[RMDB]
RNA sequence: GGGAACGACUCGAGUAGAGUCGAAAAAAAAAAGAUAUGGAUCCGAAGCUCGAAGAACUAUAAAAGUCGUAUGUCGGAAACGACAUACGUCGCUAUAGGGAGAGCUAAGGAUCCUAAGUCAAAAAAAGUAAUCUAAGUAGUUCGCUACUUAGAUUACAAAAGAAACAACAACAACAAC
Reactivity to DMS in 0.01 (KOAc 150mM, MgCl2 10mM, bicine 150mM(pH8.5), 24C), signal-to-noise 1, nucleotides 027 to 126: a000a050a120a100a090a090g010a000u000a300u000g000g000a030u000c030c000g000a300a080g000c000u000c000g000a120a140g010a250a140c000u000a030u030a000a040a090a180g050u000c000g040u000a020u000g010u000c000g000g010a030a080a020c000g000a000c010a000u000a000c030g000u000c000g000c300u000a000u000a010g030g040g000a020g000a000g030c010u030a000a300g000g000a000u000c010c010u000a000a040g050u050c000a000a020a070a030a050a100a240